[RMDB]
RNA sequence: GGGAACGACUCGAGUAGAGUCGAAAACUACCAUUUUAUAAUCCAUAACUUGAGACAAAUGAAUUCCUGUGCUUGAUGGUAGAUAUGUAUACUCAUUCGAAGAACUGGUAACUGUGUGGGGUUAGUGCGGUUAGGAUCAAUUCGUUGAUCCUAACCGAAAAGAAACAACAACAACAAC
Reactivity to 2A3 in 0.01 (KOAc 150mM, MgCl2 10mM, bicine 150mM(pH8.5), 24C), signal-to-noise 2, nucleotides 027 to 126: c010u050a010c000c020a040u080u130u070u090a220u070a110a070u160c010c040a060u060a210a220c010u010u090g000a030g060a080c050a020a140a080u200g100a030a130u130u080c040c010u120g030u080g060c050u080u030g020a040u020g010g050u010a010g010a010u160a010u070g080u020a060u000a090c020u040c040a000u130u030c060g100a080a050g010a190a030c020u050g050g010u040a080a020c040u010g000u040g050u060g000g000g000g000u000u070a040g040u050g180
Reactivity to DMS in 0.01 (KOAc 150mM, MgCl2 10mM, bicine 150mM(pH8.5), 24C), signal-to-noise 2, nucleotides 027 to 126: c050u010a080c070c000a050u000u000u020u010a030u010a110a110u000c020c010a030u020a100a110c070u000u000g030a150g030a080c130a020a080a130u000g020a120a110u000u000c040c030u010g000u010g010c100u000u000g010a050u010g000g010u000a000g000a130u000a030u000g010u000a070u100a090c050u010c020a060u010u010c100g000a080a080g010a080a050c050u010g020g000u000a040a080c070u000g030u000g010u000g030g000g030g000u010u000a050g040u000g020
Structure probing data (2A3 and DMS) for a 177-nucleotide construct. Values cover nucleotides 27 to 126. The 2A3 profile rests on 835 reads.